[RMDB]
RNA sequence: GGGAACGACUCGAGUAGAGUCGAAAAGCCAUUGAUGUAUUACACGAUUUUUUUUCAUCAGAGAGAAUACAAUCGUAAAGAGAGUCGUUUGUAGAUAUCCCAUCUCCAUUGAAGAUGUCCAAUAAUGGUAUAAGAGCUCCAACAGCAGAUGCGGUGGUCACCCCUACUUGUUCGCAAGUAGGGGUGAAAAAGAAACAACAACAACAAC
Reactivity to 2A3 in 0.01 (KOAc 150mM, MgCl2 10mM, bicine 150mM(pH8.5), 24C), signal-to-noise 1, nucleotides 027 to 156: g000c010c000a040u020u150g090a020u060g040u210a110u040u050a030c000a000c040g000a020u030u000u000u000u000u000u060u050c070a120u090c140a140g120a000g000a000g040a110a050u060a080c040a050a000u000c020g100u130a020a020a000g090a000g000a010g040u010c040g070u020u020u050g140u040a010g010a060u060a100u070c040c030c000a040u050c010u000c010c020a030u010u070g020a040a060g020a100u050g080u000c000c060a030a000u110a190a010u060g030g030u050a110u090a100a060g000a010g020c020u050c070c000a050a070c020a070g050c020a000g060a100u060g010c000g050g020u000g010g040

Background:
Structure probing data (2A3) for a 207-nucleotide construct. Values cover nucleotides 27 to 156.